[RMDB]
Source information: Chemical mapping of a 177-nucleotide RNA with 2A3 and DMS. For 2A3, 10,085 sequencing reads were counted. Values are in units of 0.01, from 0 to 300, in steps of 10. For DMS, 10,924 sequencing reads were counted.
RNA sequence: GGGAACGACUCGAGUAGAGUCGAAAACAGCAAUUUGCUCAAAUAAAAACGUAAAAACGAAAUGCAGCAGCAAAACCCAGGAAGCUGCGCAUGCGUCUCUGGCAGCAUAUAAUUGUCUCUUGGGCAGUACCUGAGGAUUAUUCGUAAUCCUCAGGUAAAAAGAAACAACAACAACAAC
Reactivity to 2A3 in 0.01 (KOAc 150mM, MgCl2 10mM, bicine 150mM(pH8.5), 24C), signal-to-noise 9, nucleotides 027 to 126: c030a010g100c040a080a130u070u100u160g000c010u010c040a050a090a060u270a110a100a030a010a010c060g080u110a030a060a090a090a050c070g040a160a060a000u060g040c100a100g000c000a000g000c020a100a040a080a190c030c010c010a010g040g060a100a030g010c010u010g000c010g000c000a010u040g010c000g040u020c020u020c020u110g050g000c010a010g020c070a030u080a010u060a180a160u100u050g030u030c010u010c020u070u020g000g020g010c020a020g060
Reactivity to DMS in 0.01 (KOAc 150mM, MgCl2 10mM, bicine 150mM(pH8.5), 24C), signal-to-noise 5, nucleotides 027 to 126: c110a150g030c110a070a070u010u020u020g030c030u000c040a040a060a080u040a040a080a060a060a090c110g000u050a050a040a060a100a060c090g000a040a090a040u000g010c020a140g000c010a010g000c010a050a050a060a140c010c020c020a080g010g010a090a140g000c000u000g000c010g010c010a020u010g000c000g000u020c050u000c070u010g020g000c040a030g010c090a040u010a070u030a040a100u010u010g000u010c040u000c060u010u000g000g000g000c080a070g000